Chemical mapping of a 177-nucleotide RNA with 2A3 and DMS. DMS (dimethyl sulfate) methylates the pairing face of unpaired adenines and cytosines. For DMS, 16,599 sequencing reads were counted. The reactions ran in a buffer of 150 mM KOAc, 10 mM MgCl2 and 150 mM bicine (pH 8.5), at 24 C. Values cover nucleotides 27 to 126.

RNA sequence: GGGAACGACUCGAGUAGAGUCGAAAAGAUAUGGACUAGCUCACACAGAGCUUCUGCUCGGAAACGAGCAGUAAGCGACGAAGUGUGGGAGGCUAGUCCUAAGUCAAAACCGCUGUUCGCAGCGGAACACAUUCUUACUGUUCGCAGUAAGAAUGUGAAAAGAAACAACAACAACAAC
Reactivity to 2A3 in 0.01 (KOAc 150mM, MgCl2 10mM, bicine 150mM(pH8.5), 24C), signal-to-noise 8, nucleotides 027 to 126: g020a020u060a050u140g010g000a000c000u000a010g000c030u060c200a010c000a000c020a040g080a020g060c000u000u000c000u000g000c000u000c010g020g010a060a070a030c010g000a000g030c000a010g010u040a000a000g020c020g300a300c110g160a270a300g080u040g010u020g110g140g040a040g160g020c000u000a000g000u000c000c000u010a010a010g000u000c010a000a010a110a180c010c000g000c000u020g050u090u080c300g000c150a010g000c000g000g010a040a000
Reactivity to DMS in 0.01 (KOAc 150mM, MgCl2 10mM, bicine 150mM(pH8.5), 24C), signal-to-noise 8, nucleotides 027 to 126: g000a020u000a300u010g000g010a020c000u000a010g010c000u000c000a030c010a010c010a100g010a210g010c000u000u000c000u000g010c000u000c000g010g000a100a070a180c010g010a020g000c000a000g010u010a010a010g020c010g010a170c300g010a110a120g010u000g020u000g000g000g010a110g010g000c010u000a010g000u000c000c000u000a010a080g010u010c030a110a060a110a190c000c010g010c000u000g000u010u010c200g030c010a020g010c000g000g000a050a140